[RMDB]
An RNA of 177 nucleotides, treated with DMS and 2A3 and read out base by base.
RNA sequence: GGGAACGACUCGAGUAGAGUCGAAAAAAAGAUAUGGAGAAGAGUUUCUAGGACGAAGCCAUGGGUCUAUGGUCGGAAACGACCAUAGUUCCCAUGGAUGGACCGGAACUCUUCUCCUAAGUCAAAAUCUUAUGUGUAACUUCGGUUACACAUAAGAAAAAGAAACAACAACAACAAC
Reactivity to DMS in 0.01 (KOAc 150mM, MgCl2 10mM, bicine 150mM(pH8.5), 24C), signal-to-noise 3, nucleotides 027 to 126: a110a100a120g000a030u000a300u000g000g010a020g010a030a010g010a020g010u010u000u000c010u010a190g050g000a300c050g040a180a160g000c010c000a000u000g010g010g010u000c010u000a000u010g000g020u010c010g020g000a060a110a120c010g010a010c000c000a000u000a000g000u000u010c010c000c010a010u010g020g010a030u000g010g010a090c000c040g000g000a020a010c000u000c010u000u000c000u000c000c000u000a000a080g000u000c030a130a120a140a100
Reactivity to 2A3 in 0.01 (KOAc 150mM, MgCl2 10mM, bicine 150mM(pH8.5), 24C), signal-to-noise 1, nucleotides 027 to 126: a010a010a020g080a050u080a040u190g000g010a000g010a030a000g000a020g030u120u190u180c130u300a300g070g010a090c060g100a210a040g030c000c000a000u000g000g000g000u010c020u000a000u000g030g000u000c020g000g050a050a070a060c000g030a010c000c000a000u000a000g000u000u040c000c000c020a000u020g010g000a000u000g030g030a060c030c000g000g000a000a010c000u020c000u000u000c000u000c000c010u000a000a000g000u010c000a010a010a000a130

For 2A3, 2,526 sequencing reads were counted. The DMS profile rests on 2,371 reads. The RNA was probed in 150 mM KOAc, 10 mM MgCl2 and 150 mM bicine (pH 8.5) at 24 C. High 2A3 reactivity points to a flexible backbone, as in loops and unpaired stretches.